[RMDB]
RNA sequence: GGGAACGACUCGAGUAGAGUCGAAAAUGUACUGUUUCACAGUGAAAUUACACUUCCAUUGUAAUCAGAAUAAAUCUUUUUUUUUUCUUCUCCUCCUAAGGUCCAAGAAACUGGAGACAUUGUCAUUUCAAAUGCAUAUGUGGAUCUUGCACCAACACCUAGGCAUACUAUUCGUAGUAUGCCUAGGAAAAGAAACAACAACAACAAC
Reactivity to DMS in 0.01 (KOAc 150mM, MgCl2 10mM, bicine 150mM(pH8.5), 24C), signal-to-noise 1, nucleotides 027 to 156: u000g030u000a180c080u000g010u000u000u000c040a100c080a060g050u000g010a040a050a070u010u000a180c130a090c240u000u010c010c020a080u000u010g040u000a050a040u000c030a100g010a130a100u000a090a050a090u000c000u000u000u000u000u000u000u000u000u000u000c030u000u010c020u000c020c000u000c040c060u000a080a080g020g030u000c010c030a100a130g000a040a040a060c070u000g000g010a100g010a060c160a050u000u000g040u000c040a100u000u000u000c040a070a060a090u020g000c070a060u010a070u010g010u010g030g000a080u000c050u020u040g050c050a080c050c010a060a030c150a110
Reactivity to 2A3 in 0.01 (KOAc 150mM, MgCl2 10mM, bicine 150mM(pH8.5), 24C), signal-to-noise 3, nucleotides 027 to 156: u140g030u030a060c010u010g050u060u050u050c090a040c030a050g020u050g040a020a070a120u100u100a070c030a000c080u060u030c050c010a050u050u100g040u060a080a050u030c020a030g060a080a140u080a100a190a160u120c140u090u030u060u010u030u030u010u040u090u050c050u130u040c030u030c000c010u050c000c050u060a120a020g010g020u010c030c010a020a030g050a050a120a010c020u070g010g030a010g010a010c010a020u030u030g090u090c030a080u080u140u150c130a070a120a000u050g010c020a050u070a010u200g030u050g000g030a000u020c000u000u030g040c050a050c010c000a100a000c020a040